[RMDB]
RNA sequence: GGGAACGACUCGAGUAGAGUCGAAAAAGAAGUUGAUUGGCGGUGAUGUCACUCCAGUUGACCAAUACAUGUGUGGCGUUGAUGGAAAACCCAUUAGUGCCUACGCAUUUUUAAUGGCCAAGGAUGGAAAUCGGCUCCUUCGGGAGCCGAAAAAGAAACAACAACAACAAC
Reactivity to DMS in 0.01 (KOAc 150mM, MgCl2 10mM, bicine 150mM(pH8.5), 24C), signal-to-noise 2, nucleotides 027 to 129: a120g030a110a110g040u080u000g020a110u000u040g000g010c090g040g010u000g000a300u010g190u070c140a110c030u030c000c080a090g040u090u010g010a000c010c040a180a010u070a040c050a000u000g000u000g040u000g000g000c020g030u000u020g020a000u030g010g040a090a080a190a270c300c030c030a000u000u060a080g010u040g040c020c010u000a070c040g080c000a040u000u000u230u010u020a010a290u010g020g010c080c000a000a050g010g000a000u080g030g000a040a020a050
Reactivity to 2A3 in 0.01 (KOAc 150mM, MgCl2 10mM, bicine 150mM(pH8.5), 24C), signal-to-noise 1, nucleotides 027 to 129: a020g230a000a000g000u110u060g070a190u030u030g000g000c060g000g000u140g040a140u300g190u280c000a000c030u000c000c000a000g000u020u020g000a000c000c040a110a050u000a010c080a050u000g000u010g000u000g030g030c000g000u000u000g000a000u070g010g010a060a050a000a020c020c000c000a000u000u000a000g040u000g000c000c080u030a080c000g000c000a000u010u000u000u000u000a250a240u090g000g000c000c000a070a010g000g000a000u050g000g010a000a000a110